About this RNA
This 170-nucleotide RNA was probed chemically with 2A3 and DMS. The DMS profile rests on 122,449 reads. Reactivities are given for positions 27 through 129. The RNA was probed in 150 mM KOAc, 10 mM MgCl2 and 150 mM bicine (pH 8.5) at 24 C. 2A3 adducts were read by reverse transcription with SuperScript II with manganese. The 2A3 profile rests on 109,480 reads. DMS adducts were read by reverse transcription with MarathonRT.
[RMDB]
RNA sequence: GGGAACGACUCGAGUAGAGUCGAAAAGAUCCCGGGCUUACCCACGGGAACUGCUGGGUUCCCCUGAUGUCCAGUCCCUCCCCGCUCCUGGAGAAGGGAGACUCGGGAACGCCUAGCAUCUGAGGGAUACACUCACGAUUCGUCGUGAGUAAAAGAAACAACAACAACAAC
Reactivity to 2A3 in 0.01 (KOAc 150mM, MgCl2 10mM, bicine 150mM(pH8.5), 24C), signal-to-noise 9, nucleotides 027 to 129: g100a080u050c000c000c000g000g020g000c080u120u160a110c000c010c010a060c050g010g000g020a030a070c050u040g010c010u030g000g010g000u040u070c030c020c000c020u060g040a060u210g060u020c030c020a030g060u010c010c000c000u000c010c000c000c010g060c050u120c040c060u130g050g030a150g040a120a060g030g010g000a020g010a010c010u010c020g010g000g010a020a020c060g040c010c010u020a010g010c010a030u020c020u040g040a120g000g030g000a010u050a090c070
Reactivity to DMS in 0.01 (KOAc 150mM, MgCl2 10mM, bicine 150mM(pH8.5), 24C), signal-to-noise 9, nucleotides 027 to 129: g030a080u000c000c010c030g000g010g010c110u020u040a080c020c040c040a170c090g020g000g000a070a140c060u020g000c040u030g010g010g000u000u010c110c060c020c050u050g010a110u050g030u010c020c100a070g020u010c000c000c000u010c010c000c000c040g030c090u010c060c060u050g000g000a130g000a110a090g010g000g010a040g000a130c040u020c050g000g020g050a050a090c140g000c020c010u000a040g040c020a030u020c030u020g020a070g000g000g000a090u020a090c170